[RMDB]
RNA sequence: GGGAACGACUCGAGUAGAGUCGAAAAUGUUUUUCUAUCGUACAAUAGCGGAUUACUGUGUCCGAUAGAGUCCUGCUAGCGAAAGAUAUGGGCCUGUCAUUAGUGUCUGGACCUUGUGACGGCACAACGUGGCUAAUUUAUUCGUAAAUUAGCCACGAAAAGAAACAACAACAACAAC
Reactivity to DMS in 0.01 (KOAc 150mM, MgCl2 10mM, bicine 150mM(pH8.5), 24C), signal-to-noise 5, nucleotides 027 to 126: u010g010u000u010u000u000u000c010u000a050u000c010g010u000a090c040a070a130u000a030g040c040g010g010a100u010u010a110c040u000g010u000g000u010c070c040g000a040u000a010g000a060g000u000c010c010u010g030c100u010a080g010c200g000a080a110a100g000a090u000a060u000g010g000g000c020c010u000g020u000c020a030u000u010a040g020u010g000u000c080u000g010g000a060c070c020u000u000g010u000g000a050c020g010g000c030a030c070a030a140
Reactivity to 2A3 in 0.01 (KOAc 150mM, MgCl2 10mM, bicine 150mM(pH8.5), 24C), signal-to-noise 5, nucleotides 027 to 126: u050g030u030u190u020u020u000c010u010a030u020c000g010u050a040c040a110a210u010a080g020c060g070g110a110u120u100a240c030u050g030u030g070u120c040c020g050a020u030a010g010a000g010u010c000c010u050g030c030u040a030g050c020g090a170a080a020g070a060u100a140u160g000g000g060c020c040u090g010u000c000a020u020u070a050g020u030g040u160c140u190g120g170a070c000c000u000u010g010u020g010a020c000g020g020c010a000c000a050a030
The data come from the RNA Mapping Database (RMDB), library OK2TST. Chemical mapping of a 177-nucleotide RNA with DMS and 2A3. 2A3 adducts were read by reverse transcription with SuperScript II with manganese. Values cover nucleotides 27 to 126.